[RMDB]
RNA sequence: GGGAACGACUCGAGUAGAGUCGAAAAUUAAGGUGUCUUCCCUUAAAACAUUGGUACUAUGUUUGAAGCAGGGAUCAAAGGCUUGUCUAUUACCAGCACCUUUUACAAAAAUGAACAGCCUUCUUGCUUUUGUGUGUGAUGCGCUACUUUAGUGCUAGUACUAAUCGUGGUUCGCCACGAUUAGUACAAAAGAAACAACAACAACAAC
Reactivity to 2A3 in 0.01 (KOAc 150mM, MgCl2 10mM, bicine 150mM(pH8.5), 24C), signal-to-noise 1, nucleotides 027 to 156: u130u010a000a040g050g000u020g030u030c050u030u020c000c000c110u050u140a140a110a030a020c120a050u060u120g080g010u090a070c080u020a040u020g130u060u120u100g050a020a010g010c030a010g050g000g040a090u100c170a110a020a000g020g000c020u130u180g050u000c050u100a070u070u190a140c100c010a030g000c020a080c000c000u000u080u030u100a110c130a010a070a020a000a010u090g040a120a010c000a000g000c000c000u000u000c010u060u070g000c000u030u050u090u050g150u040g020u020g050u000g010a060u040g030c050g000c060u050a050c170u220u120u140a080g010u020g020c000u010a050
Reactivity to DMS in 0.01 (KOAc 150mM, MgCl2 10mM, bicine 150mM(pH8.5), 24C), signal-to-noise 1, nucleotides 027 to 156: u010u000a040a070g030g040u000g000u010c090u000u000c010c020c020u000u000a050a060a030a010c030a080u000u010g020g000u000a050c110u020a030u020g020u000u000u000g000a110a140g000c070a040g030g010g010a090u010c120a100a040a070g010g010c010u000u000g000u000c050u000a100u010u000a020c050c050a150g020c020a010c010c000u010u000u030u000a130c140a000a050a120a070a090u040g040a040a040c050a070g020c020c000u000u000c020u000u000g020c010u000u000u010u000g010u000g060u030g040u000g040a190u010g010c040g020c000u000a060c100u000u000u000a040g030u000g010c000u000a300
Annotation: An RNA of 207 nucleotides, treated with 2A3 and DMS and read out base by base. Conditions: 150 mM KOAc, 10 mM MgCl2 and 150 mM bicine (pH 8.5), 24 C. DMS adducts were read by reverse transcription with MarathonRT. For DMS, 2,317 sequencing reads were counted. The 2A3 profile rests on 595 reads.